Background: The data come from the RNA Mapping Database (RMDB), library 15KLIB. Chemical mapping of a 170-nucleotide RNA with 2A3 and DMS. The RNA was probed in 150 mM KOAc, 10 mM MgCl2 and 150 mM bicine (pH 8.5) at 24 C. For DMS the reverse transcriptase was MarathonRT. The 2A3 profile rests on 1,599 reads. Reactivities are given for positions 27 through 129.
RNA sequence: GGGAACGACUCGAGUAGAGUCGAAAAAUGCUGCUAUGAUCAUGUUAUAGCAACUCCACAUAAGAUGGUUUUGUCUGUUUCUCCUUACGUUUGUAAUGCCCCUGGUUGUGGCGUUUCAGACGUUACUAAAGAAUAGCCUUCGGGCUAUUCAAAAGAAACAACAACAACAAC
Reactivity to 2A3 in 0.01 (KOAc 150mM, MgCl2 10mM, bicine 150mM(pH8.5), 24C), signal-to-noise 2, nucleotides 027 to 129: a000u060g000c000u050g000c030u000a010u010g020a070u150c240a090u290g020u090u010a120u000a130g020c000a010a010c030u010c020c000a150c000a100u220a250a020g030a170u290g020g160u080u010u010u010g000u030c080u030g000u130u000u000c010u060c020c000u080u010a000c000g000u000u000u140g000u010a000a000u000g000c000c050c000c000u090g220g000u100u080g020u100g000g000c000g000u030u010u000c000a000g000a000c040g000u010u080a110c000u050a050a130a000
Reactivity to DMS in 0.01 (KOAc 150mM, MgCl2 10mM, bicine 150mM(pH8.5), 24C), signal-to-noise 2, nucleotides 027 to 129: a010u060g030c000u040g020c000u090a090u030g000a050u090c270a110u090g000u000u000a030u020a130g060c010a000a080c000u020c000c060a210c190a270u060a000a000g020a150u030g040g000u040u000u000u000g030u060c180u000g080u040u000u030c070u030c170c190u000u010a050c030g000u000u090u000g010u010a020a070u020g020c000c020c000c020u040g000g100u000u090g030u060g040g000c030g000u020u000u000c000a050g030a020c030g040u000u070a120c270u050a150a070a150